This 207-nucleotide RNA was probed chemically with DMS and 2A3. Source: RMDB library OK3TST, as collected in RNAgym. DMS adducts were read by reverse transcription with MarathonRT. The reactions ran in a buffer of 150 mM KOAc, 10 mM MgCl2 and 150 mM bicine (pH 8.5), at 24 C.
RNA sequence: GGGAACGACUCGAGUAGAGUCGAAAACAGGAGUUUAGCAUAGCUCCAUUCUACUAUGCAGCUAGUCGUCGUUUUCGACGUCUAGGAUAGACCGCUACAGCAGGGUCGAUGAACUGCUGAUUACCGCCUCUCGUAGCGCGGGUUCUGGCUACGUACAGAUUUUAUUAGUCUUCGGACUAAUAAAAUCAAAAGAAACAACAACAACAAC
Reactivity to DMS in 0.01 (KOAc 150mM, MgCl2 10mM, bicine 150mM(pH8.5), 24C), signal-to-noise 3, nucleotides 027 to 156: c040a160g020g000a120g010u000u000u000a110g030c020a040u000a010g000c010u000c060c290a130u010u010c010u010a060c020u000a010u010g020c020a300g010c020u000a020g010u000c020g010u000c010g040u000u000u000u000c040g020a020c010g010u000c000u000a010g010g010a180u000a070g010a050c010c010g000c010u010a080c020a040g000c000a050g010g000g030u000c050g010a180u020g010a090a100c030u000g020c010u000g000a160u000u000a060c010c020g000c010c010u000c040u000c080g020u000a010g020c060g010c010g000g000g000u000u010c060u000g010g020c040u000a070c040g010u000a100c080a220
Reactivity to 2A3 in 0.01 (KOAc 150mM, MgCl2 10mM, bicine 150mM(pH8.5), 24C), signal-to-noise 5, nucleotides 027 to 156: c050a040g010g000a010g000u030u050u130a030g010c010a010u010a020g000c000u000c010c000a040u130u070c020u040a070c020u010a020u030g020c020a040g070c010u000a000g010u010c010g000u000c030g030u050u070u150u300c040g020a000c000g010u000c000u000a000g010g000a010u080a070g000a000c020c010g010c050u080a060c010a000g000c000a000g000g000g020u020c080g080a080u180g050a050a040c010u000g000c000u010g010a100u010u160a060c020c010g020c000c020u120c020u030c060g030u040a000g000c040g000c020g060g010g000u060u060c060u060g070g000c010u010a010c020g010u020a040c040a060